[RMDB]
RNA sequence: GGGAACGACUCGAGUAGAGUCGAAAAUGAAGAUAUUAGAUCUGAAUCAAAUGGUGACAAGAAACCGACAAUCAGAACCACCGCCUCAUUUCCACUCGGAGUAGGGAGAAGUGAUGCAUCUCCUGAAUAAUCUUUUGUUUUUCGAAACAAAAGAUUAAAAAGAAACAACAACAACAAC
Reactivity to DMS in 0.01 (KOAc 150mM, MgCl2 10mM, bicine 150mM(pH8.5), 24C), signal-to-noise 5, nucleotides 027 to 126: u000g000a140a070g000a050u010a100u000u010a110g000a070u000c020u000g010a120a070u000c120a080a100a080u010g000g010u010g000a100c090a080a160g010a070a150a040c070c030g010a080c170a060a080u010c050a040g010a080a100c040c040a060c090c070g000c040c020u000c040a050u000u010u010c020c010a090c150u000c100g010g010a070g010u010a120g000g010g000a020g000a020a030g000u010g000a040u000g000c160a040u000c010u000c000c000u000g000a060a080
Reactivity to 2A3 in 0.01 (KOAc 150mM, MgCl2 10mM, bicine 150mM(pH8.5), 24C), signal-to-noise 3, nucleotides 027 to 126: u070g000a030a050g040a030u090a130u260u290a070g030a120u010c010u010g040a040a070u040c040a010a050a120u150g020g000u040g010a050c070a130a060g090a170a100a010c060c000g020a030c080a020a100u060c020a010g020a050a050c010c000a020c030c030g040c010c010u030c010a040u020u010u020c030c010a090c030u120c100g150g080a100g040u040a040g010g030g010a030g010a020a010g020u010g040a020u040g020c000a000u000c020u000c000c000u000g030a010a000
An RNA of 177 nucleotides, treated with DMS and 2A3 and read out base by base. The reactions ran in a buffer of 150 mM KOAc, 10 mM MgCl2 and 150 mM bicine (pH 8.5), at 24 C. The 2A3 profile rests on 2,841 reads.